[RMDB]
RNA sequence: GGGAACGACUCGAGUAGAGUCGAAAAUGGUGGACAGCGGUUCAUGAUAUGCAUGAAUGGCAUGAGCUGUCGAACCGCCGGCAGCACUUUAGUCUAUAGUGCGGCCUUUAGGCAGAAGGUGCGGCACACUUCCUUGCGUCUUCGGGCGCAGGGAAGUAAAAGAAACAACAACAACAAC
Reactivity to 2A3 in 0.01 (KOAc 150mM, MgCl2 10mM, bicine 150mM(pH8.5), 24C), signal-to-noise 9, nucleotides 027 to 126: u160g020g010u030g020g020a020c020a020g000c010g040g000u010u020c010a010u020g090a100u110a060u290g190c030a020u040g050a060a020u050g100g030c050a070u120g040a020g000c000u000g010u040c010g010a020a010c010c010g020c010c000g020g000c010a020g010c000a010c020u060u060u090a050g030u020c040u060a110u060a090g030u040g050c020g010g000c000c000u030u040u050a110g030g010c060a020g060a080a010g100g010u300g300c010g030g000c030a020c010
Reactivity to DMS in 0.01 (KOAc 150mM, MgCl2 10mM, bicine 150mM(pH8.5), 24C), signal-to-noise 9, nucleotides 027 to 126: u030g010g020u000g000g000a030c030a050g010c010g010g010u010u000c010a010u000g000a190u040a090u030g010c070a050u010g010a030a030u010g010g000c040a080u010g010a070g000c000u000g010u010c000g010a080a170c010c020g010c080c020g010g010c010a030g010c020a020c010u000u000u000a130g010u010c070u000a050u010a050g010u000g000c020g000g010c030c000u000u000u010a050g020g010c080a140g020a060a040g000g010u000g000c000g000g000c030a100c150